RNA sequence: GGGAACGACUCGAGUAGAGUCGAAAAGGGAAAGCGGUGCCAUAAUCCGUACCGCCUUACCAACCUCAGUCAAAAGUAUAAGUUUUCUUAUUUCACAACUCAUUGGGCAAUAGCCCAGCAUUCCCUGUACGUCGUCAUUUUUCGAAAUGACGACGUAAAAAGAAACAACAACAACAAC
Reactivity to 2A3 in 0.01 (KOAc 150mM, MgCl2 10mM, bicine 150mM(pH8.5), 24C), signal-to-noise 3, nucleotides 027 to 126: g050g000g000a040a020a020g030c000g000g000u010g000c020c020a070u080a160a040u120c040c000g000u000a010c000c000g010c000c000u160u300a010c000c000a000a030c000c000u100c070a050g100u070c060a050a030a000a030g070u040a130u040a160a090g040u080u020u100u050c010u030u090a100u060u120u100c050a040c020a110a070c030u030c050a130u040u100g000g000g000c020a050a300u050a230g010c000c000c000a000g000c000a020u010u000c000c000c000u000g020
Reactivity to DMS in 0.01 (KOAc 150mM, MgCl2 10mM, bicine 150mM(pH8.5), 24C), signal-to-noise 2, nucleotides 027 to 126: g000g000g000a150a260a170g000c040g000g010u000g020c030c030a050u000a200a040u000c270c300g020u000a000c000c000g020c000c050u000u000a280c010c000a060a110c000c010u000c120a050g030u020c090a040a050a080a090g000u020a120u040a070a110g000u000u000u000u000c010u000u010a060u020u010u020c090a040c110a020a000c080u000c060a140u010u000g020g020g000c000a240a030u010a010g010c000c030c020a030g000c090a080u040u000c000c020c000u010g000

The data come from the RNA Mapping Database (RMDB), libraries RFM100 and RFMREP. The record gives the reactivity of an RNA of 177 nucleotides to 2A3 and DMS. Reactivities are given for positions 27 through 126. For DMS the reverse transcriptase was MarathonRT. The reactions ran in a buffer of 150 mM KOAc, 10 mM MgCl2 and 150 mM bicine (pH 8.5), at 24 C.